[RMDB]
RNA sequence: GGGAACGACUCGAGUAGAGUCGAAAACGGUUGGUGCGGGCCAUCUUCCACUCAAAGGAAACUCACAUAGUUGUCGUUUCUGUCUCUCUGUGACGGCAAUUGUUCUUUUCUAUGCAUCUACUCCACAUAUAUGGACCCUGUUCGCAGGGUCCAUAUAAAAAGAAACAACAACAACAAC
Reactivity to DMS in 0.01 (KOAc 150mM, MgCl2 10mM, bicine 150mM(pH8.5), 24C), signal-to-noise 1, nucleotides 027 to 126: c110g040g010u000u000g020g000u000g040c080g000g010g040c030c120a050u030c090u000u000c020c070a030c080u000c130a070a140a200g000g000a000a120a060c110u000c040a130c100a030u040a040g020u000u000g000u000c020g000u000u000u000c010u000g000u030c040u000c010u010c030u010g000u000g000a060c000g010g000c090a070a020u010u000g000u000u000c040u000u030u060u000c010u010a110u000g030c030a060u000c010u010a060c010u000c030c060a050c070a150
Reactivity to 2A3 in 0.01 (KOAc 150mM, MgCl2 10mM, bicine 150mM(pH8.5), 24C), signal-to-noise 2, nucleotides 027 to 126: c060g030g050u090u070g050g000u060g040c050g020g010g040c010c010a080u020c050u140u000c010c030a050c010u140c080a060a060a000g050g000a040a000a050c030u040c030a090c010a120u160a020g020u010u040g020u030c010g000u000u010u070c040u020g110u020c030u000c000u000c020u140g060u110g030a010c000g000g000c000a010a010u050u040g010u040u090c010u080u060u040u010c000u060a090u150g010c010a090u020c000u040a020c010u060c050c020a070c040a040
Chemical mapping of a 177-nucleotide RNA with DMS and 2A3.
It was measured as part of the RMDB library OK1LIB.
The RNA was probed in 150 mM KOAc, 10 mM MgCl2 and 150 mM bicine (pH 8.5) at 24 C.
For 2A3, 1,085 sequencing reads were counted.
2A3 adducts were read by reverse transcription with SuperScript II with manganese.